This 207-nucleotide RNA was probed chemically with 2A3. Reactivities are given for positions 27 through 156. For 2A3 the reverse transcriptase was SuperScript II with manganese.
RNA sequence: GGGAACGACUCGAGUAGAGUCGAAAAACCUUUGUGCCAAAGACAUGGCUCACGCCGUGAUGAGGCGAACCCAUUGGGUUCGCUACCCACCAUCGGGGUGAGCCAACAGCUUUGGCACUCUGGUAAAUCUGAGCGUUAGUUCGCUAACGCUCAGAAAGCAUGUGCAAGAGUUCGCUCUUGCACAUGCAAAAGAAACAACAACAACAAC
Reactivity to 2A3 in 0.01 (KOAc 150mM, MgCl2 10mM, bicine 150mM(pH8.5), 24C), signal-to-noise 3, nucleotides 027 to 156: a010c000c000u000u010u010g020u010g000c000c010a020a000a000g030a150c080a140u080g030g000c010u010c000a010c030g300c010c020g060u080g040a080u000g010a030g010g020c000g000a010a000c050c000c150a300u190u300g030g000g030u000u000c000g000c000u020a030c000c030c000a050c010c000a020u190c090g000g000g000g000u020g000a000g010c000c000a000a000c010a010g010c010u000u000u000g000g000c000a000c000u000c000u000g000g000u040a080a050a100u000c000u010g000a000g010c010g000u000u000a010g000u040u060c250g020c150u000a000a000c000g000c010u000c000a010g000a000a000a000